[RMDB]
RNA sequence: GGGAACGACUCGAGUAGAGUCGAAAAAUCAGCUCCUUUGACCUUAGUGCUGCAGGAUUGCAGGGGGCUCAGCAAGUCAAAGAUCAUGUUAGUUACCAUUGUACAGAAGCCUAUGCCUUCUAACCAACUACUCUCAGCUGUUCGCAGCUGAGAGUAGAAAAGAAACAACAACAACAAC
Reactivity to DMS in 0.01 (KOAc 150mM, MgCl2 10mM, bicine 150mM(pH8.5), 24C), signal-to-noise 1, nucleotides 027 to 126: a040u010c050a040g000c040u010c110c000u000u030u020g010a140c030c270u010u000a110g020u020g020c010u000g010c200a090g000g010a140u000u020g030c060a060g000g000g010g010g010c000u010c000a050g010c060a090a080g000u010c040a040a060a070g010a100u000c170a050u000g040u000u000a150g000u000u000a130c010c000a090u030u010g020u060a130c220a080g000a050a070g010c040c200u000a050u000g010c140c000u000u000c020u030a150a170c160c070a060a050
Chemical mapping of a 177-nucleotide RNA with DMS. The data come from the RNA Mapping Database (RMDB), library OK2TRN. Conditions: 150 mM KOAc, 10 mM MgCl2 and 150 mM bicine (pH 8.5), 24 C.